[RMDB]
RNA sequence: GGGAACGACUCGAGUAGAGUCGAAAACUCAGUCUUCGGACUGAGAAAAAGAACACUAGCCGGAAAUACGUUGUUGCAAUUGCCGGAAGUUUAAGCCAACUACAAAAAAGUGCAUCUUCGGAUGCACCGAGAGAAUACUCUUCGGAGUAUUCUCUCGAAAAGAAACAACAACAACAAC
Reactivity to DMS in 0.01 (KOAc 150mM, MgCl2 10mM, bicine 150mM(pH8.5), 24C), signal-to-noise 2, nucleotides 027 to 126: c000u000c000a020g000u000c000u000u010c200g010g030a020c010u000g000a030g010a020a060a040a160a070g020a200a150c120a030c000u000a010g030c000c000g010g000a050a020a300u010a080c290g000u000u000g030u030u000g010c000a000a050u010u000g000c000c010g010g000a160a000g000u000u000u000a020a000g000c040c010a020a010c010u000a110c160a030a040a100a090a080a180g000u000g000c010a000u010c000u010u030c210g010g000a010u000g010c000a010c000
Reactivity to 2A3 in 0.01 (KOAc 150mM, MgCl2 10mM, bicine 150mM(pH8.5), 24C), signal-to-noise 1, nucleotides 027 to 126: c000u000c000a000g000u000c000u010u150c200g110g000a010c010u020g000a000g020a010a070a000a000a010g040a040a020c040a000c050u020a030g140c000c000g020g030a010a060a040u190a050c070g010u000u010g000u020u000g000c000a010a000u000u010g020c000c000g030g010a000a000g010u060u090u200a020a020g020c040c000a000a000c010u080a050c060a010a150a020a040a030a000g010u000g020c010a000u000c000u070u070c230g080g000a000u000g000c000a000c000